[RMDB]
This 177-nucleotide RNA was probed chemically with DMS and 2A3. The reactions ran in a buffer of 150 mM KOAc, 10 mM MgCl2 and 150 mM bicine (pH 8.5), at 24 C. For 2A3, 3,268 sequencing reads were counted.
RNA sequence: GGGAACGACUCGAGUAGAGUCGAAAAGUCAUUAUCAGUACUUAUCUGUUAUGUUUAAUGAUAAUAACUUAAUAUUACGUACACCGGGUGAUAUAGAUGCAUUUUUGAGACAGUACUCUAUGACGGACGGACUAUAGACAUUCGUGUCUAUAGUCCGAAAAGAAACAACAACAACAAC
Reactivity to DMS in 0.01 (KOAc 150mM, MgCl2 10mM, bicine 150mM(pH8.5), 24C), signal-to-noise 2, nucleotides 027 to 126: g000u000c010a020u010u010a020u010c120a030g040u030a040c020u000u020a060u030c100u000g000u020u000a000u000g000u000u070u050a080a160u010g010a040u020a000a010u000a100a130c030u030u010a060a070u000a110u030u010a000c050g000u020a000c130a130c070c080g010g000g050u020g030a010u010a060u000a060g000a040u000g000c090a030u020u000u000u000u000g010a070g000a050c180a040g020u050a000c030u010c160u000a030u000g010a090c060g020g010a200
Reactivity to 2A3 in 0.01 (KOAc 150mM, MgCl2 10mM, bicine 150mM(pH8.5), 24C), signal-to-noise 5, nucleotides 027 to 126: g000u000c020a020u000u120a020u130c040a000g010u010a020c020u050u100a040u060c030u100g090u150u140a060u070g080u050u170u110a160a120u120g090a050u040a170a020u070a090a030c020u030u100a050a020u050a070u050u080a030c040g040u070a020c090a080c130c060g150g010g030u060g050a030u020a010u040a160g130a080u110g030c020a050u010u010u080u150u180g090a080g010a000c010a010g010u010a010c010u010c030u040a040u030g030a010c010g020g030a010